[RMDB]
RNA sequence: GGGAACGACUCGAGUAGAGUCGAAAAGAUGGGCGGAACCUACAACGAACCCAACACCAACCUCACCAGCCCGGAGACCACCAUCCGAAACCUGGUGCACGGCAUCGGUUUUCAGCGUGACGUGCUGGUGCUACUCAGGUUUCGACCUGAGUAGCACAAAAGAAACAACAACAACAAC
Reactivity to 2A3 in 0.01 (KOAc 150mM, MgCl2 10mM, bicine 150mM(pH8.5), 24C), signal-to-noise 1, nucleotides 027 to 126: g030a040u050g010g040g060c050g020g030a070a070c060c010u080a080c070a110a020c050g050a060a060c000c000c000a000a010c020a020c030c030a040a060c010c000u060c010a010c000c010a010g010c050c010c020g000g000a070g050a020c060c000a020c020c010a090u020c030c010g020a020a000a010c050c030u070g000g000u000g030c000a040c190g140g000c020a000u090c010g000g070u000u010u030u140c050a030g060c020g040u030g020a040c000g000u030g000c000u060g050
Reactivity to DMS in 0.01 (KOAc 150mM, MgCl2 10mM, bicine 150mM(pH8.5), 24C), signal-to-noise 2, nucleotides 027 to 126: g010a100u000g000g000g010c060g000g010a090a260c050c040u000a090c170a130a090c150g020a090a110c100c020c050a100a080c080a050c050c060a050a130c070c040u010c030a080c030c030a080g030c120c060c010g000g030a100g010a170c180c030a070c080c070a060u010c140c090g000a020a030a030c020c000u000g060g010u000g000c010a070c130g020g010c030a050u000c070g000g010u000u000u000u000c020a080g060c090g010u010g000a090c050g000u000g010c030u000g000